[RMDB]
RNA sequence: GGGAACGACUCGAGUAGAGUCGAAAAUAUAAGUGCAGGAUGACGUUCAAGUCCAGGAUCAGGUUGCGUACCUCUAUGGCCCCUUGAAGCAGUUCGGGUCCUGAGCGGAGGUCUGCUCGCUGGCACCACGUGAGAUAGCCUUCGGGCUAUCUCACGUAAAAGAAACAACAACAACAAC
Reactivity to DMS in 0.01 (KOAc 150mM, MgCl2 10mM, bicine 150mM(pH8.5), 24C), signal-to-noise 1, nucleotides 027 to 126: u000a130u000a060a130g060u020g060c080a050g040g000a180u000g020a160c040g000u000u020c070a020a070g000u000c090c030a000g000g000a040u040c100a140g010g000u020u050g000c030g000u000a090c020c060u000c150u000a080u000g000g000c050c030c030c000u070u000g000a070a070g040c250a050g030u000u020c000g000g020g090u010c000c030u020g000a070g000c170g000g040a020g000g000u000c030u000g000c060u000c060g040c060u000g000g000c170a050c120c080
Reactivity to 2A3 in 0.01 (KOAc 150mM, MgCl2 10mM, bicine 150mM(pH8.5), 24C), signal-to-noise 1, nucleotides 027 to 126: u270a000u070a020a050g010u000g060c000a000g070g000a100u110g000a030c030g020u050u000c130a040a070g030u130c040c000a080g140g000a100u050c160a000g000g120u070u100g010c000g070u070a070c030c000u000c030u000a070u070g040g000c070c000c000c000u060u070g060a160a060g040c060a030g000u000u090c000g000g000g000u060c020c060u100g000a010g000c090g070g020a150g000g000u020c020u050g000c000u000c040g020c010u030g000g000c000a020c010c000
An RNA of 177 nucleotides, treated with DMS and 2A3 and read out base by base. It was measured as part of the RMDB library OK1LIB. The reactions ran in a buffer of 150 mM KOAc, 10 mM MgCl2 and 150 mM bicine (pH 8.5), at 24 C. The 2A3 profile rests on 606 reads. For 2A3 the reverse transcriptase was SuperScript II with manganese.